[RMDB]
RNA sequence: GGGAACGACUCGAGUAGAGUCGAAAAAAUCGGUUCGCCGAUUAAUGUGUCCUAAGUCACAACCUUGGACCGUGGUAGCGCAACAGCCGUCGGAAACGACGGACAUGCGUUUCCACGCUAGGUUGUGAUAUGGAGUCUAUAGAGCUUCGGCUCUAAAAACUUAACAAUGGUUCGCCAUUGUUAAGUUAAAAGAAACAACAACAACAAC
Reactivity to 2A3 in 0.01 (KOAc 150mM, MgCl2 10mM, bicine 150mM(pH8.5), 24C), signal-to-noise 4, nucleotides 027 to 156: a020a000u030c030g000g030u080u050c210g030c080c010g000a010u060u060a110a090u140g190u040g070u010c010c000u040a130a030g030u000c000a010c000a010a010c010c010u060u150g100g090a180c150c070g000u000g000g020u010a000g000c000g000c010a020a090c050a200g020c000c010g000u010c000g010g050a090a060a040c020g000a000c000g000g010a010c010a040u020g000c010g000u010u010u000c000c000a000c000g000c000u000a000g000g000u000u000g000u000g000a000u000a000u020g010g010a040g020u000c040u150a140u060a100g000a000g000c010u060u040c280g100g010c000u040c000u020a020a000a000
Reactivity to DMS in 0.01 (KOAc 150mM, MgCl2 10mM, bicine 150mM(pH8.5), 24C), signal-to-noise 3, nucleotides 027 to 156: a040a000u000c010g020g010u000u000c280g050c000c000g020a030u000u000a030a070u010g010u000g010u000c010c000u000a060a190g020u000c010a020c000a020a010c020c000u000u010g070g020a030c180c010g000u000g020g010u010a030g000c000g020c010a040a070c110a220g010c010c000g000u000c010g010g010a140a120a230c020g000a060c010g000g000a000c050a180u000g010c000g010u010u000u000c000c000a020c020g030c010u010a010g010g010u000u000g020u000g010a000u000a060u020g000g000a160g020u010c070u010a280u010a040g010a110g000c010u010u020c300g040g020c010u000c000u000a000a040a130

Annotation
The record gives the reactivity of an RNA of 207 nucleotides to 2A3 and DMS. In probing experiments dimethyl sulfate is read out at A N1 and C N3, which are open when not base-paired. Source: RMDB library RNAMAK, as collected in RNAgym. 2A3 adducts were read by reverse transcription with SuperScript II with manganese. The reactions ran in a buffer of 150 mM KOAc, 10 mM MgCl2 and 150 mM bicine (pH 8.5), at 24 C.